[RMDB]
RNA sequence: GGGAACGACUCGAGUAGAGUCGAAAAGGCAUGCCCGGUCUGGCACGAUGACCUGGUGCGCGCUAGCUAUGCCCCACCGUCAUCCCAAGGAUCGCGAGUGGCAAGGACCCGACGGCGCGGCAUGCUGACGUAGCAACUGUUUCGACAGUUGCUACGUAAAAGAAACAACAACAACAAC
Reactivity to 2A3 in 0.01 (KOAc 150mM, MgCl2 10mM, bicine 150mM(pH8.5), 24C), signal-to-noise 2, nucleotides 027 to 126: g010g010c000a010u010g000c020c010c000g040g010u020c020u030g040g060c040a010c110g070a060u070g000a020c020c100u080g000g030u070g020c070g000c000g010c040u050a040g080c000u090a060u300g030c020c030c000c000a010c010c000g020u020c010a020u050c000c050c030a050a040g010g000a020u030c010g030c050g080a100g120u160g060g030c040a060a070g090g030a040c020c020c010g050a080c050g060g080c060g000c050g050g000c010a020u030g000c000u010g000
Reactivity to DMS in 0.01 (KOAc 150mM, MgCl2 10mM, bicine 150mM(pH8.5), 24C), signal-to-noise 4, nucleotides 027 to 126: g010g020c000a010u000g000c000c000c050g030g000u000c020u010g000g020c200a120c170g000a040u000g020a040c050c120u010g030g000u010g010c120g020c120g010c050u000a100g010c150u010a060u000g010c000c020c070c040a010c050c060g010u000c050a070u000c010c010c050a300a240g000g010a030u010c070g010c050g000a140g010u010g000g030c100a110a160g000g000a140c030c040c020g010a100c090g000g000c070g010c150g000g010c020a010u010g010c020u000g010